[RMDB]
RNA sequence: GGGAACGACUCGAGUAGAGUCGAAAACGCCGCGAUGAAGGCGAGCUCGGGGGAUCAGGGGAGCCCCCCGUGCUUCCUGCGCUUCCCGCGGCCUGUGCGGGUGGUAAGUGGCGCCGAGGCCGAGCUCACCAUCCGUCUGAUUCGUCAGACGGAUGGUAAAAGAAACAACAACAACAAC
Reactivity to DMS in 0.01 (KOAc 150mM, MgCl2 10mM, bicine 150mM(pH8.5), 24C), signal-to-noise 2, nucleotides 027 to 126: c170g010c030c010g030c030g000a060u010g010a060a050g010g020c100g010a020g020c010u010c010g010g000g000g010g000a100u030c080a180g000g000g020g000a230g030c130c000c020c010c000c000g000u000g000c000u000u020c090c130u020g020c090g010c040u000u000c020c120c040g010c000g010g000c020c040u000g020u000g020c050g010g000g020u000g000g030u010a060a090g030u000g020g020c100g020c080c070g010a090g010g000c040c040g000a140g020c120u010c070
Reactivity to 2A3 in 0.01 (KOAc 150mM, MgCl2 10mM, bicine 150mM(pH8.5), 24C), signal-to-noise 1, nucleotides 027 to 126: c050g010c000c030g020c000g020a080u150g060a050a010g000g020c050g000a010g000c000u000c000g000g000g000g010g000a040u070c090a160g140g060g000g010a030g000c010c000c000c020c000c000g000u000g010c000u050u010c010c020u050g000c110g030c000u010u010c000c010c000g000c000g020g050c000c050u160g050u170g040c030g030g010g010u080g040g020u080a100a130g060u050g050g020c000g000c010c020g020a050g080g000c020c020g020a030g000c030u020c020